[RMDB]
RNA sequence: GGGAACGACUCGAGUAGAGUCGAAAAGAUAUGGAUCAAUGAGCGAUAAGAUAGCGGUCGGAAACGACCGGCUAUCUUUUGACGCUCCAAGUCCUAAGUCAAACCGAACUGGUUCGCCAGUUCGGAAGACAGUGGUAUACUUCGGUAUACCACUGUCAAAAGAAACAACAACAACAAC
Reactivity to DMS in 0.01 (KOAc 150mM, MgCl2 10mM, bicine 150mM(pH8.5), 24C), signal-to-noise 3, nucleotides 027 to 126: g000a020u000a300u000g010g000a020u000c040a150a240u010g010a020g000c000g000a190u000a020a000g010a010u000a000g000c000g010g000u000c000g010g010a080a090a170c000g000a010c000c000g020g030c000u010a000u000c000u000u000u010u000g000a200c100g020c000u000c010c120a230a220g000u000c000c000u000a070a200g000u000c000a070a100a230c010c000g000a030a000c000u000g000g000u000u010c300g000c000c020a010g010u000u000c010g000g000a020a010
Reactivity to 2A3 in 0.01 (KOAc 150mM, MgCl2 10mM, bicine 150mM(pH8.5), 24C), signal-to-noise 1, nucleotides 027 to 126: g040a000u070a010u090g010g000a000u120c060a040a110u280g010a010g000c020g000a030u010a110a040g000a010u000a010g000c020g030g000u000c000g000g020a030a110a060c000g010a000c000c000g020g000c010u000a000u000c000u000u000u000u000g000a000c030g020c000u000c010c000a080a030g020u000c020c000u030a070a030g070u010c050a060a060a140c030c010g000a000a010c000u010g000g080u090u060c290g050c070c010a010g000u010u000c000g000g010a000a000

The record gives the reactivity of an RNA of 177 nucleotides to DMS and 2A3. 2A3 adducts were read by reverse transcription with SuperScript II with manganese. Conditions: 150 mM KOAc, 10 mM MgCl2 and 150 mM bicine (pH 8.5), 24 C. DMS adducts were read by reverse transcription with MarathonRT.